[RMDB]
RNA sequence: GGGAACGACUCGAGUAGAGUCGAAAAUGUGCUGCGCACCAGAUCACGCAGAGCGGCCUCAUCCACUGAGUCUAGUGCAACCCCGCCCUGCGAACCUAGAUUAUCCUCGGUGUUUUCGCCGCCACCGACGGCGUAAUAGGUUCGCCUAUUACGCCGUAAAAGAAACAACAACAACAAC
Reactivity to DMS in 0.01 (KOAc 150mM, MgCl2 10mM, bicine 150mM(pH8.5), 24C), signal-to-noise 5, nucleotides 027 to 126: u020g030u020g010c030u000g000c050g020c020a090c060c060a050g010a050u010c080a150c030g020c010a040g010a070g000c040g020g030c080c050u000c100a070u020c210c030a040c040u010g020a120g010u040c060u040a030g030u010g010c130a130a130c200c100c020c020g000c050c030c030u000g020c010g020a050a030c110c060u010a030g010a090u040u010a090u010c040c040u000c030g000g000u010g000u010u000u020u000c060g000c000c050g000c120c010a040c010c030g000
Reactivity to 2A3 in 0.01 (KOAc 150mM, MgCl2 10mM, bicine 150mM(pH8.5), 24C), signal-to-noise 9, nucleotides 027 to 126: u180g040u060g020c020u030g010c020g000c020a030c020c010a030g010a080u090c040a020c050g010c010a000g010a020g030c010g010g020c000c030u090c040a100u050c050c000a030c050u060g050a060g180u050c070u160a020g030u050g070c030a040a120c010c000c000c010g020c000c010c000u020g010c010g020a030a020c010c030u080a080g010a160u090u140a060u180c020c040u030c050g000g010u020g010u040u040u070u030c030g000c020c010g000c010c000a020c000c010g020